[RMDB]
RNA sequence: GGGAACGACUCGAGUAGAGUCGAAAACGUGCCUUCAUGCUAAGGGUUUGAUAUCUGCUAAAACCCGGUGCAUUCAUCAAUGCAGGCUAAGCCAAAGGGAUGUCCCGACCGGAGGCCGACAAUCCAGAUAGCUCAAGAAUGUUCGCAUUCUUGAGAAACACUAAUUAUACUUCGGUAUAAUUAGUGUAAAAGAAACAACAACAACAAC
Reactivity to 2A3 in 0.01 (KOAc 150mM, MgCl2 10mM, bicine 150mM(pH8.5), 24C), signal-to-noise 8, nucleotides 027 to 156: c060g080u090g010c010c010u070u090c040a030u080g010c020u040a030a070g010g020g010u010u010u010g070a080u070a100u190c100u120g040c070u120a040a030a020a010c000c010c010g010g000u020g000c010a040u090u160c030a040u060c060a100a120u100g040c050a000g020g000c020u070a070a000g000c000c010a030a000a000g020g010g010a040u050g060u060c010c000c010g020a010c000c010g010g000a010g000g010c000c000g020a010c030a080a070u060c050c010a010g040a170u100a050g050c010u000c000a000a000g000a000a010u020g020u070u090c200g010c100a000u000u000c000u000u000g000a000g000a000a010
Reactivity to DMS in 0.01 (KOAc 150mM, MgCl2 10mM, bicine 150mM(pH8.5), 24C), signal-to-noise 7, nucleotides 027 to 156: c070g030u010g010c020c010u000u000c050a070u000g030c020u000a300a240g000g010g030u000u000u000g010a190u000a080u000c060u000g020c120u010a130a030a040a030c010c000c000g010g040u000g020c000a060u000u000c060a030u000c100a080a160u000g030c060a050g010g020c040u000a090a100g020c020c010a040a300a290g010g010g020a090u000g010u000c010c010c000g010a300c030c020g010g010a300g010g010c010c010g000a110c080a030a110u000c040c020a180g000a140u000a120g010c020u000c000a010a010g010a040a010u000g020u000u010c280g030c020a050u000u000c000u000u000g000a010g000a050a090
This 207-nucleotide RNA was probed chemically with 2A3 and DMS.
Reactivities are given for positions 27 through 156.